RNA sequence: GGGAACGACUCGAGUAGAGUCGAAAAGCUCGACAAACAGGAAGAGUUGCGCAAUCUGAUUCUGCCCAAGGCCGGACUGAUUUUCAUGUCGGGGGCAAUGAACGUCGAUCUGUCGGAAUUCCCGCUCACUCGGUCAUCAGUUCGCUGAUGACCGAGUAAAAGAAACAACAACAACAAC
Reactivity to DMS in 0.01 (KOAc 150mM, MgCl2 10mM, bicine 150mM(pH8.5), 24C), signal-to-noise 2, nucleotides 027 to 126: g030c040u000c000g030a050c100a050a190a050c150a010g030g000a080a270g010a060g000u000u000g030c080g050c100a050a110u000c080u000g000a300u000u010c050u000g000c010c000c070a190a060g010g000c000c090g000g000a080c210u100g010a070u090u040u050u060c070a060u000g030u060c010g000g090g030g020g000c010a000a080u000g000a040a020c130g000u000c010g000a090u050c120u000g000u000c100g020g000a080a100u000u000c000c020c000g010c190u030c060
Reactivity to 2A3 in 0.01 (KOAc 150mM, MgCl2 10mM, bicine 150mM(pH8.5), 24C), signal-to-noise 3, nucleotides 027 to 126: g010c050u020c020g040a020c030a020a290a000c020a010g110g040a030a090g060a010g090u070u130g030c030g010c020a000a110u040c020u090g070a180u120u000c020u040g020c050c000c060a070a060g130g000c030c030g010g000a020c020u060g070a090u250u100u070u110c120a080u230g070u010c000g050g000g000g030g000c040a020a060u200g010a010a020c060g040u000c000g060a020u010c060u070g100u130c010g070g020a000a030u020u010c000c000c000g040c000u060c000
Structure probing data (DMS and 2A3) for a 177-nucleotide construct. For 2A3, 962 sequencing reads were counted. It was measured as part of the RMDB library OK1LIB. The DMS profile rests on 1,313 reads. The reactions ran in a buffer of 150 mM KOAc, 10 mM MgCl2 and 150 mM bicine (pH 8.5), at 24 C.